[RMDB]
RNA sequence: GGGAACGACUCGAGUAGAGUCGAAAAGUUGCAGCGUCGUCGUCGUCGUCGUCCGUUUCGGACUCCAUUUUACGCCGCCCGCUUCGCAUUCAGAGCAAACAGGUCCACCACCCUCGGCGCAGACGAGUGCCUUCUUUCCAUUCGUGGAAAGAAGGCAAAAAGAAACAACAACAACAAC
Reactivity to 2A3 in 0.01 (KOAc 150mM, MgCl2 10mM, bicine 150mM(pH8.5), 24C), signal-to-noise 3, nucleotides 027 to 126: g100u050u080g040c020a060g000c010g080u020c000g020u000c000g030u000c000g030u020c000g060u030c050g030u010c000c030g060u020u110u150c050g010g010a030c000u010c000c000a070u030u110u130u080a040c060g020c050c000g020c010c000c000g030c010u050u050c010g000c020a020u070u130c010a050g070a020g070c050a000a040a100c020a010g030g100u070c020c010a050c000c030a030c020c020c000u010c000g030g010c050g000c050a030g020a120c030g040a040g040
Reactivity to DMS in 0.01 (KOAc 150mM, MgCl2 10mM, bicine 150mM(pH8.5), 24C), signal-to-noise 2, nucleotides 027 to 126: g000u040u000g000c100a010g010c070g010u020c040g020u000c100g020u010c050g020u010c000g000u010c060g000u000c030c030g000u020u040u000c060g010g020a100c060u000c040c020a120u020u010u030u030a060c140g000c020c030g000c000c020c030g020c090u010u010c100g000c040a020u000u060c060a100g000a170g000c100a070a040a080c100a050g000g000u000c000c030a020c040c010a070c030c000c020u000c020g020g000c070g000c090a090g020a100c040g020a080g000